An RNA of 177 nucleotides, treated with 2A3 and DMS and read out base by base.
The RNA was probed in 150 mM KOAc, 10 mM MgCl2 and 150 mM bicine (pH 8.5) at 24 C.
In probing experiments dimethyl sulfate is read out at A N1 and C N3, which are open when not base-paired.
Source: RMDB library TTRDEL, as collected in RNAgym.
[RMDB]
RNA sequence: GGGAACGACUCGAGUAGAGUCGAAAAGAUAUGGACGUUCAAUGAUGUAUCUUGGAUUUAUCGGAAACGAUUGUCAGAUACAAGUUGAGACGUCCUAAGUCAAAAGGCAUCAGUUCGCUGAUGCCAACGAAAAAGCACUGUUCGCAGUGCUUUUUCGAAAAGAAACAACAACAACAAC
Reactivity to 2A3 in 0.01 (KOAc 150mM, MgCl2 10mM, bicine 150mM(pH8.5), 24C), signal-to-noise 1, nucleotides 027 to 126: g020a020u090a080u170g000g000a000c010g000u020u020c020a020a010u100g140a180u300g040u000a000u000c030u080u270g100g050a080u280u300u150a050u020c030g030g060a080a030a070c010g030a040u020u050g050u050c000a000g030a000u020a010c020a030a000g000u000u010g070a110g040a030c020g000u000c010c000u030a020a000g010u000c060a030a020a030a210g000g040c010a010u000c000a000g040u010u170c300g010c080u010g030a020u020g000c050c010a020a010
Reactivity to DMS in 0.01 (KOAc 150mM, MgCl2 10mM, bicine 150mM(pH8.5), 24C), signal-to-noise 2, nucleotides 027 to 126: g000a030u000a300u000g010g050a020c000g010u000u000c000a000a010u000g000a300u010g000u000a010u000c000u050u000g030g010a030u000u000u000a010u010c010g000g000a080a030a190c000g020a010u000u000g000u010c030a030g000a020u000a000c000a030a300g020u010u000g010a050g000a010c000g020u000c010c030u000a000a070g000u000c060a040a060a090a140g010g000c000a000u000c000a000g000u000u010c260g040c010u000g020a020u000g000c000c000a020a010

The 2A3 profile rests on 1,763 reads. 2A3 adducts were read by reverse transcription with SuperScript II with manganese. For DMS, 1,336 sequencing reads were counted. For DMS the reverse transcriptase was MarathonRT.